[RMDB]
RNA sequence: GGGAACGACUCGAGUAGAGUCGAAAAUGACACUGAUCCGGAUUUGGUAGUUGACAAAUCCUCCAUGCCGAGAUUAGUUUCAUUUUGCGUCUUUUGAAUUCGAAUAGUUCAUGUGAUGUGACGUAGUUUUGGGCAUGUAAUUCGUUACAUGCCCAAAAAAAGAAACAACAACAACAAC
Reactivity to DMS in 0.01 (KOAc 150mM, MgCl2 10mM, bicine 150mM(pH8.5), 24C), signal-to-noise 3, nucleotides 027 to 126: u010g010a010c050a010c010u020g010a020u000c000c010g000g000a110u010u000u000g010g010u020a030g040u000u010g000a180c300a110a110a120u040c080c040u010c000c010a000u010g000c020c000g020a080g000a000u000u000a010g010u000u000u000c010a000u000u000u010u000g000c010g030u000c000u010u020u010u060g000a070a040u020u000c070g000a080a070u010a130g010u000u000c000a050u000g010u020g020a120u000g010u010g010a100c060g030u030a060g000u000
Reactivity to 2A3 in 0.01 (KOAc 150mM, MgCl2 10mM, bicine 150mM(pH8.5), 24C), signal-to-noise 3, nucleotides 027 to 126: u020g000a000c010a000c000u000g000a000u000c000c000g000g150a290u040u030u050g070g050u150a040g030u030u190g100a080c090a050a190a050u110c000c000u000c000c010a010u020g000c000c010g300a300g010a110u000u000a000g010u010u000u000c010a010u020u040u040u010g130c030g000u000c030u090u190u050u150g100a060a040u020u070c080g010a030a050u060a170g010u010u030c010a010u050g080u050g100a070u040g060u030g000a020c030g020u110a150g030u020